RNA sequence: GGGAACGACUCGAGUAGAGUCGAAAAGGGGUCGUCCCGAUGGUAGUACAAGACAUGCUCUACACAGGCUGAAGCCUCCACGGCCUGGGUAGAGCAACAGCUUGUACGAGAGUAGGGACGACGGAGGCACCCAAAGUCUCUCGUUCGCGAGAGACAACUAAUAUGUCUAGUUCGCUAGACAUAUUAGAAAAGAAACAACAACAACAAC
Reactivity to DMS in 0.01 (KOAc 150mM, MgCl2 10mM, bicine 150mM(pH8.5), 24C), signal-to-noise 4, nucleotides 027 to 156: g020g000g050g040u000c020g000u010c010c000c010g000a130u020g010g030u020a280g000u000a020c010a030a030g010a050c030a230u010g030c010u000c000u010a020c010a030c010a010g010g000c000u000g010a060a150g020c010c000u000c020c020a300c020g030g000c020c020u000g020g000g070u000a000g020a020g020c000a020a020c040a110g020c010u000u010g010u000a000c010g000a300g010a090g000u000a300g000g000g000a040c010g020a010c010g010g010a050g020g020c020a090c010c010c010a100a110a140g000u000c000u000c000u000c000g020u000u000c270g040c030g000a030g000a020g020a000c000a010a100
Reactivity to 2A3 in 0.01 (KOAc 150mM, MgCl2 10mM, bicine 150mM(pH8.5), 24C), signal-to-noise 3, nucleotides 027 to 156: g280g010g020g000u010c010g000u010c000c000c010g000a040u040g020g010u010a020g010u010a000c000a020a010g080a100c150a300u300g030c000u000c000u010a000c020a000c000a000g000g000c000u000g010a080a010g030c000c000u000c000c000a010c000g000g000c000c000u000g000g000g000u000a000g000a010g000c000a000a010c000a000g010c000u010u000g000u000a000c000g000a010g000a010g000u030a060g000g000g000a000c000g000a000c000g000g000a000g000g000c010a040c010c000c000a060a130a020g000u000c000u000c000u000c000g030u060u070c300g000c020g110a000g000a000g000a000c000a000a000